[RMDB]
RNA sequence: GGGAACGACUCGAGUAGAGUCGAAAAGACCCAGUAAUACCCGGGGGGAGGCGGGGUUAACCCAUACUAUGGGAACUGCUGGGUUCCUCGGAUGUCGAUCCCCUCUCCCGUUCGGGAAAAGGGGGACUACUCUGCUAGUUCGCUAGCAGAAAAAGAAACAACAACAACAAC
Reactivity to DMS in 0.01 (KOAc 150mM, MgCl2 10mM, bicine 150mM(pH8.5), 24C), signal-to-noise 9, nucleotides 027 to 129: g000a090c010c000c000a070g030u030a050a080u040a100c040c020c000g000g000g000g030g050g010a050g000g020c140g010g010g010g010u000u000a090a110c050c040c010a060u000a070c160u050a090u040g030g030g030a080a050c080u040g030c100u040g020g000g030u000u000c010c000u010c180g010g010a040u000g030u010c050g020a080u030c000c000c000c010u000c100u000c000c000c000g020u010u010c110g020g020g020a010a030a070a070g020g000g000g000g030a110c080u030a080c110
Reactivity to 2A3 in 0.01 (KOAc 150mM, MgCl2 10mM, bicine 150mM(pH8.5), 24C), signal-to-noise 9, nucleotides 027 to 129: g050a010c000c000c000a000g020u060a020a110u060a130c010c000c000g010g000g000g010g010g010a020g010g020c080g010g000g010g000u030u080a050a040c000c000c010a010u110a170c120u140a120u200g010g000g010a030a020c020u080g050c030u100g090g020g000u020u010c000c000u010c010g030g020a050u080g030u050c040g040a150u050c000c000c000c000u000c000u010c000c010c010g090u170u200c100g000g000g000a030a030a000a010g010g010g000g000g000a000c000u030a040c020